[RMDB]
RNA sequence: GGGAACGACUCGAGUAGAGUCGAAAAGCUGGAGGAGCAGGCCCAGCAGAUACGCCUGCAGGCCGAGGCCUUCCAGGCCCGCCUCAAGAGCUGGUUCGAGCCCCUGGUGGAAGACAUGCAGCGCCAGCUGCUCAUUCGAUUUCGAUCGAAUGAGCAGAAAAGAAACAACAACAACAAC
Reactivity to DMS in 0.01 (KOAc 150mM, MgCl2 10mM, bicine 150mM(pH8.5), 24C), signal-to-noise 9, nucleotides 027 to 126: g010c010u000g000g000a060g010g000a060g020c030a230g010g010c020c010c050a140g020c020a030g000a170u010a080c300g010c180c000u000g010c030a260g000g010c010c010g000a190g000g000c010c010u000u010c050c040a050g010g010c010c030c020g010c060c030u000c080a090a120g000a100g010c020u000g010g010u000u000c070g000a130g000c030c010c020c020u010g000g020u010g000g000a090a080g000a110c100a060u010g010c090a090g010c120g000c020c020a050g000
Reactivity to 2A3 in 0.01 (KOAc 150mM, MgCl2 10mM, bicine 150mM(pH8.5), 24C), signal-to-noise 5, nucleotides 027 to 126: g030c000u010g010g010a000g010g020a070g010c010a020g020g000c010c010c030a020g000c010a000g030a060u190a140c130g100c070c000u010g000c010a010g000g000c000c010g030a040g080g010c000c000u130u000c010c000a000g010g000c000c020c000g020c010c020u120c060a100a070g030a030g160c020u040g020g030u090u120c060g060a060g060c000c000c000c030u040g040g000u060g040g070a070a030g060a090c030a050u130g030c040a030g040c010g000c020c000a000g000
Structure probing data (DMS and 2A3) for a 177-nucleotide construct. The data come from the RNA Mapping Database (RMDB), library OK2TST. As a SHAPE reagent, 2A3 marks flexible, mostly unpaired nucleotides at the ribose 2'-OH. 2A3 adducts were read by reverse transcription with SuperScript II with manganese.